[RMDB]
RNA sequence: GGGAACGACUCGAGUAGAGUCGAAAAAGUUCUAGUCCUCACCUAAGAUCAGACUAACAUGGCCCUCAAAGCAAGAGCACUUGGUUGGGCUUUGUGGUGGGGAUUAGUGUCUCAUUUUUAGUCCCAAAUUAAAAACGAGAUUUUGGGCUGUACAUCAACUACGAAAAUGGUUCGCCAUUUUCGUAGUAAAAGAAACAACAACAACAAC
Reactivity to 2A3 in 0.01 (KOAc 150mM, MgCl2 10mM, bicine 150mM(pH8.5), 24C), signal-to-noise 3, nucleotides 027 to 156: a000g050u070u050c000u010a000g000u000c000c000u000c000a010c000c010u100a150a050g050a170u150c100a090g130a190c050u090a060a010c030a030u050g030g010c000c000c020u020c070a080a130a070g010c060a130a020g060a040g170c020a060c090u030u020g040g080u110u050g010g020g010c000u010u020u020g060u020g000g000u000g000g000g000g000a000u000u000a000g010u000g010u000c000u000c030a050u050u160u100u070u220a010g060u140c000c020c000a000a030a000u070u060a070a060a040a040a020c110g010a030g030a220u050u020u010u050g000g000g000c020u050g020u110a040c020a080u120c050a100
Reactivity to DMS in 0.01 (KOAc 150mM, MgCl2 10mM, bicine 150mM(pH8.5), 24C), signal-to-noise 1, nucleotides 027 to 156: a120g000u010u010c000u040a050g010u000c000c000u000c020a040c030c010u020a060a110g040a130u020c080a150g000a110c040u000a060a110c050a070u000g030g000c000c020c010u000c050a080a070a170g050c100a060a080g020a130g020c040a090c090u000u000g020g010u010u000g000g020g010c010u000u000u010g040u000g000g030u010g010g000g000g000a010u000u000a010g040u000g010u000c010u000c020a000u000u000u000u000u010a040g010u010c010c050c050a040a020a120u010u000a010a010a010a030a040c020g020a050g010a220u000u000u000u000g000g020g030c070u000g000u000a100c090a190u000c040a160